Overview
Source: RMDB library M2RFPK, as collected in RNAgym. Chemical mapping of a 207-nucleotide RNA with 2A3.
[RMDB]
RNA sequence: GGGAACGACUCGAGUAGAGUCGAAAAACGAGUGAGUUACGACUCACUCGACUUUUAAUGCUACCCAAAGGUCGCGACAAGUCGAUAAAACGCAGAGUCAAAAAGUCCGACGUUACGACGUCGGACAACGAGCGAGUUCUGUUCGCAGAACUCGCAAGGACUAUAACCUCUUCGGAGGUUAUAGUCCAAAAGAAACAACAACAACAAC
Reactivity to 2A3 in 0.01 (KOAc 150mM, MgCl2 10mM, bicine 150mM(pH8.5), 24C), signal-to-noise 1, nucleotides 027 to 156: a040c000g000a040g000u010g010a000g020u040u090a050c220g060a010c050u010c000a000c000u000c010g000a000c000u140u160u030u160a120a130u160g040c010u040a070c020c000c000a040a010a170g040g000u000c010g010c010g030a080c030a100a020g060u080c000g020a010u050a100a020a000a010c040g040c130a040g010a010g080u070c020a000a000a000a000a070g000u020c000c000g000a000c020g010u020u050a070c250g040a000c000g060u000c010g000g010a000c010a000a000c010g040a050g000c010g000a000g000u010u000c050u010g060u080u080c200g060c020a000g000a010a000c000u000c000g030c010a000a000
Conditions: 150 mM KOAc, 10 mM MgCl2 and 150 mM bicine (pH 8.5), 24 C.